Structure probing data (DMS and 2A3) for a 207-nucleotide construct. DMS (dimethyl sulfate) methylates the pairing face of unpaired adenines and cytosines. The data come from the RNA Mapping Database (RMDB), library VIROID. 2A3 adducts were read by reverse transcription with SuperScript II with manganese. For DMS the reverse transcriptase was MarathonRT. The RNA was probed in 150 mM KOAc, 10 mM MgCl2 and 150 mM bicine (pH 8.5) at 24 C.
[RMDB]
RNA sequence: GGGAACGACUCGAGUAGAGUCGAAAAGGGAGGGCUCCCGGGGCGCUGCACGGGCGUAGUGCUGCGUGAGACUCUAUGCCCGUGACAUGUUACGGACAAAUUCCGUAACCGUGUGAGGCCUAAUUGAAGAUGCGUACCAAGCUGCGUUUCAACCUGCCUAUUAAUUUAACUUCGGUUAAAUUAAUAGAAAAGAAACAACAACAACAAC
Reactivity to DMS in 0.01 (KOAc 150mM, MgCl2 10mM, bicine 150mM(pH8.5), 24C), signal-to-noise 2, nucleotides 027 to 156: g040g020g000a040g000g010g040c040u010c020c030c050g030g020g050g010c030g020c040u020g010c010a070c020g040g000g030c050g020u000a060g020u000g000c020u020g020c190g010u030g000a300g000a030c010u000c020u000a020u010g000c040c000c000g050u010g020a040c040a060u000g020u000u000a030c000g000g030a020c070a150a070a250u020u000c000c000g030u000a000a020c040c110g020u000g020u000g000a150g000g110c010c020u020a080a190u000u020g000a140a130g000a140u000g020c000g000u000a070c020c040a070a300g030c030u000g020c000g020u000u000u000c000a100a110c040c010u010g000c140
Reactivity to 2A3 in 0.01 (KOAc 150mM, MgCl2 10mM, bicine 150mM(pH8.5), 24C), signal-to-noise 3, nucleotides 027 to 156: g030g010g010a060g000g010g030c040u040c010c020c010g020g020g000g050c130g000c060u070g020c000a000c000g000g000g010c020g010u020a010g000u010g010c050u050g060c070g090u150g020a050g010a040c000u000c000u010a000u010g000c000c000c000g010u020g010a070c020a030u080g010u010u010a000c000g010g000a030c100a150a270a090u240u000c010c000g000u000a010a020c020c000g040u080g040u050g080a040g050g040c000c010u070a080a090u060u110g040a060a030g050a070u110g000c010g030u030a060c020c040a090a030g060c100u070g000c030g020u000u060u110c040a080a090c010c010u060g020c020